[RMDB]
RNA sequence: GGGAACGACUCGAGUAGAGUCGAAAACUUUGAACGUUCGCGUUCAAAGAAACCUCUAAGCAGAUUGGCGAGGACGACGCUGCGGAGCGCGUUUGCCAAUAUAAAGCGUAGGCUUCGGCCUACGCAAGGAUAAUACCCUGUUCGCAGGGUAUUAUCCAAAAGAAACAACAACAACAAC
Reactivity to DMS in 0.01 (KOAc 150mM, MgCl2 10mM, bicine 150mM(pH8.5), 24C), signal-to-noise 4, nucleotides 027 to 126: c000u000u000u010g020a010a010c000g020u000u010c240g020c010g030u010u010c010a000a010a020g000a080a090a160c030c010u000c190u010a090a110g020c240a100g000a060u000u000g000g000c010g000a100g010g000a030c020g000a140c000g020c000u000g020c300g020g000a030g010c010g000c000g010u000u000u000g000c000c010a020a010u000a040u000a070a110a090g010c000g010u000a000g020g000c000u000u010c160g030g000c000c000u000a000c000g000c000a000a020
Reactivity to 2A3 in 0.01 (KOAc 150mM, MgCl2 10mM, bicine 150mM(pH8.5), 24C), signal-to-noise 4, nucleotides 027 to 126: c000u000u010u000g000a000a000c000g000u030u040c220g000c000g080u010u000c030a000a000a010g000a030a020a000c030c010u020c100u150a120a140g110c080a060g060a280u020u020g020g000c030g030a080g130g050a050c020g040a110c010g010c010u160g090c130g220g130a030g000c010g000c000g010u000u020u090g000c000c020a020a000u070a020u030a040a090a020g000c000g000u000a000g000g000c000u020u040c200g090g000c000c000u000a000c000g000c000a000a000
The data come from the RNA Mapping Database (RMDB), library M2PK50.
An RNA of 177 nucleotides, treated with DMS and 2A3 and read out base by base.
For 2A3 the reverse transcriptase was SuperScript II with manganese.
Values cover nucleotides 27 to 126.